Background:
Chemical mapping of a 207-nucleotide RNA with 2A3 and DMS. For 2A3, 1,298 sequencing reads were counted. For 2A3 the reverse transcriptase was SuperScript II with manganese.

[RMDB]
RNA sequence: GGGAACGACUCGAGUAGAGUCGAAAAUUCUUCAACUGAACCACAGAAAGUUAUUUAAGUGUAUCUCCCCAACUCUCCAAAGGAUAGUGCAUAACUGGUACCAUUCCAACAUGUAUAGAGGAGAAGUUAGCUCAUUACCUACAGUGGAUACCUGAGGAGACGUACAUCUUUUCGAAGAUGUACGUCUAAAAGAAACAACAACAACAAC
Reactivity to 2A3 in 0.01 (KOAc 150mM, MgCl2 10mM, bicine 150mM(pH8.5), 24C), signal-to-noise 2, nucleotides 027 to 156: u040u010c020u110u100c030a020a030c030u060g030a010a010c040c010a060c050a110g120a190a090a030g060u110u060a110u110u260u150a140a090g040u100g070u110a110u050c080u060c040c030c000c010a000a080c020u020c000u000c030c020a050a050a050g090g000a050u060a050g100u070g030c030a020u020a150a150c020u020g050g030u040a200c020c070a050u060u000c000c000a040a040c010a100u040g010u070a060u020a110g130a040g010g020a010g000a020a020g020u030u090a020g000c020u020c110a100u110u160a080c010c010u080a170c010a050g020u050g020g040a020u030a060c060c020u010g020a030g030g020
Reactivity to DMS in 0.01 (KOAc 150mM, MgCl2 10mM, bicine 150mM(pH8.5), 24C), signal-to-noise 2, nucleotides 027 to 156: u000u000c040u000u000c010a070a150c040u000g010a010a120c030c020a030c010a140g000a130a300a100g000u000u010a090u000u010u010a070a120g020u000g020u010a130u010c010u010c020c000c030c000a050a080c020u000c020u000c020c010a050a170a140g020g000a050u000a060g020u000g020c030a120u000a080a180c130u080g000g010u000a020c030c030a050u000u000c000c000a040a130c060a070u000g000u000a140u000a080g000a130g000g000a050g010a070a070g000u000u000a080g020c020u010c050a120u000u000a120c030c030u000a060c090a050g000u000g010g000a070u010a040c010c060u000g010a110g000g000